RNA sequence: GGGAACGACUCGAGUAGAGUCGAAAACGAGCCGUCGCCGGACGAUCCGCCCGAAGAAGCGGUCUUCUGGGACGGUGACGGAACGGAGUUUACGGAAGACCAGCCUUGGGUCGAUCUCAUGGAGGGCUACCACCGCAUGAUUCGUCAUGCGGUGGUAAAAAGAAACAACAACAACAAC
Reactivity to DMS in 0.01 (KOAc 150mM, MgCl2 10mM, bicine 150mM(pH8.5), 24C), signal-to-noise 1, nucleotides 027 to 126: c000g030a300g000c000c000g000u040c000g020c020c000g000g000a050c000g000a020u000c000c080g020c010c040c040g020a120a050g100a260a230g030c000g020g000u000c000u000u050c010u000g020g020g020a040c000g000g000u000g060a130c020g000g000a120a060c060g000g000a190g020u000u010u020a090c080g000g000a070a100g040a000c070c020a120g000c300c000u040u000g000g030g030u020c010g070a040u000c020u000c070a060u000g090g000a020g000g010g000c020
Reactivity to 2A3 in 0.01 (KOAc 150mM, MgCl2 10mM, bicine 150mM(pH8.5), 24C), signal-to-noise 4, nucleotides 027 to 126: c000g000a000g010c010c010g010u030c070g090c050c000g010g060a050c030g010a060u090c030c000g010c000c030c070g160a210a070g050a090a030g030c060g050g000u030c090u000u010c030u100g030g030g090a030c000g000g010u030g040a010c000g000g010a090a020c060g020g060a130g060u060u120u160a110c100g030g120a120a030g020a040c000c010a010g100c030c000u010u050g000g010g000u000c010g020a030u010c010u000c000a050u150g050g040a050g010g000g020c040